[RMDB]
Record summary
The record gives the reactivity of an RNA of 177 nucleotides to 2A3 and DMS. For DMS, 1,425 sequencing reads were counted. Reactivities are given for positions 27 through 126. The RNA was probed in 150 mM KOAc, 10 mM MgCl2 and 150 mM bicine (pH 8.5) at 24 C.

RNA sequence: GGGAACGACUCGAGUAGAGUCGAAAAUAACAAGAGAGCUGGCUAUCUGUACUCGAUCUUGUAGGGUGUCCGGAGAAACUAGCCGUGCAGGUGCGACGAGGAGAUUAAAGGAUCGCCUCACUGACACGGGCCUAAAGUUUUUCGAAACUUUAGGCCCAAAAGAAACAACAACAACAAC
Reactivity to 2A3 in 0.01 (KOAc 150mM, MgCl2 10mM, bicine 150mM(pH8.5), 24C), signal-to-noise 2, nucleotides 027 to 126: u010a010a060c070a110a000g040a020g000a020g120c000u000g050g040c050u130a080u070c000u070g040u050a040c000u000c010g110a120u000c030u060u090g020u130a060g050g080g000u070g070u070c010c050g000g020a080g030a050a040a010c000u030a020g040c030c010g000u010g010c020a000g000g170u070g080c080g070a040c080g000a000g100g000a050g010a070u080u110a300a100a010g240g000a000u050c000g000c000c000u030c000a000c000u030g010a050c000a000c100
Reactivity to DMS in 0.01 (KOAc 150mM, MgCl2 10mM, bicine 150mM(pH8.5), 24C), signal-to-noise 2, nucleotides 027 to 126: u010a240a200c030a100a070g000a120g010a140g040c050u040g000g010c010u010a100u000c090u010g030u060a050c000u000c030g050a190u030c200u000u010g000u030a080g020g000g010u000g050u000c090c000g010g000a000g010a080a150a120c170u020a020g040c000c000g000u010g020c000a050g010g000u000g000c170g000a090c230g020a070g000g010a140g010a020u000u010a090a140a050g010g000a090u000c010g000c020c000u020c000a050c140u020g000a090c140a010c070